[RMDB]
RNA sequence: GGGAACGACUCGAGUAGAGUCGAAAAAGAUUGCAGAAUCUGAUGGCGAAACUGAAGUGGAGAUUGAGGUUCGAGGACUUUCACUUUCUACAAAGGCUGACAUUGAAGGGUUUCCAGAAGUAAAAGAUGGCGUUUUAGAUGAGAAACGUGAAGGUGAUAUACUCUCUCUAUUCGUAGAGAGAGUAUAAAAAGAAACAACAACAACAAC
Reactivity to 2A3 in 0.01 (KOAc 150mM, MgCl2 10mM, bicine 150mM(pH8.5), 24C), signal-to-noise 3, nucleotides 027 to 156: a000g050a020u030u070g020c060a040g050a100a040u010c010u060g030a050u080g030g000c060g050a090a080a070c050u060g010a130a010g030u010g040g030a040g020a040u020u080g010a020g000g020u060u060c030g050a020g030g080a030c010u100u130u000c040a010c000u060u050u010c060u100a110c040a070a160a020g010g010c010u020g020a020c020a050u060u110g020a040a030g040g020g000u050u070u020c020c030a060g040a040a020g050u130a010a060a040a030g060a070u040g030g000c030g020u040u010u040u070a020g000a030u050g050a020g030a130a040a010c020g010u010g040a000a010g030g010u030g010a010
Reactivity to DMS in 0.01 (KOAc 150mM, MgCl2 10mM, bicine 150mM(pH8.5), 24C), signal-to-noise 3, nucleotides 027 to 156: a090g000a120u000u000g020c060a100g010a080a130u000c020u000g000a090u010g020g020c010g000a120a060a090c050u010g000a080a120g030u010g020g010a080g010a110u000u000g020a110g010g010u000u010c050g020a120g020g010a050c040u010u000u010c020a030c060u000u000u000c040u000a110c050a050a060a100g010g020c070u000g020a060c040a120u010u000g010a070a120g000g010g000u010u000u010c030c020a130g010a070a120g020u010a040a070a040a170g010a060u000g000g010c030g030u000u000u000u000a110g010a120u000g000a120g010a040a020a040c050g030u000g020a060a060g000g020u000g000a170

About this RNA: This 207-nucleotide RNA was probed chemically with 2A3 and DMS. 2A3 adducts were read by reverse transcription with SuperScript II with manganese. Reactivities are given for positions 27 through 156. DMS adducts were read by reverse transcription with MarathonRT. The data come from the RNA Mapping Database (RMDB), library OK3TST. Conditions: 150 mM KOAc, 10 mM MgCl2 and 150 mM bicine (pH 8.5), 24 C. Values are in units of 0.01, from 0 to 300, in steps of 10.